[RMDB]
RNA sequence: GGGAACGACUCGAGUAGAGUCGAAAAGGACUUCGCAGUCCGGCAACAUCAGCAGAGAGCCCGCUAUACGUGACGGAUUGGCUGAAGCGUACAGAAAUAUUGAGCCUCCUGCAAGAGGCAGCCAAGCAAAACGUACGUGAGUUCGCUCACGUACGAAGCCACAUAAGAAGUUCGCUUCUUAUGUGGCAAAAGAAACAACAACAACAAC
Reactivity to 2A3 in 0.01 (KOAc 150mM, MgCl2 10mM, bicine 150mM(pH8.5), 24C), signal-to-noise 4, nucleotides 027 to 156: g040g020a050c000u010u050c120g030c080a010g000u010c000c010g000g000c010a070a070c010a090u120c030a010g040c030a020g130a020g010a060g160c030c030c040g050c030u060a060u060a090c090g010u050g020a020c020g010g030a050u020u020g130g010c060u090g010a000a010g020c030g020u030a040c030a060g130a130a140a030u210a090u130u150g070a020g010c000c000u000c000c050u130g110c030a110a070g000a010g030g000c010a010g010c020c020a020a010g020c020a040a110a030a010c000g000u000a000c000g000u000g000a000g000u040u080c150g000c100u000c000a000c000g000u000a000c000g000a000a000
Reactivity to DMS in 0.01 (KOAc 150mM, MgCl2 10mM, bicine 150mM(pH8.5), 24C), signal-to-noise 2, nucleotides 027 to 156: g000g000a050c000u000u000c130g020c070a080g000u000c020c030g000g000c050a050a120c050a120u000c060a120g000c060a070g000a210g000a160g000c060c020c020g040c060u000a100u000a060c080g020u000g000a150c010g050g000a170u000u010g020g020c010u020g010a060a300g020c020g020u000a140c100a060g000a070a130a080u010a170u000u000g010a130g020c010c000u000c020c020u000g040c180a140a070g010a070g050g020c020a050g000c000c020a070a100g010c090a060a030a080a200c000g000u000a010c020g040u000g000a010g040u000u000c300g040c000u000c000a020c000g040u000a000c000g000a040a070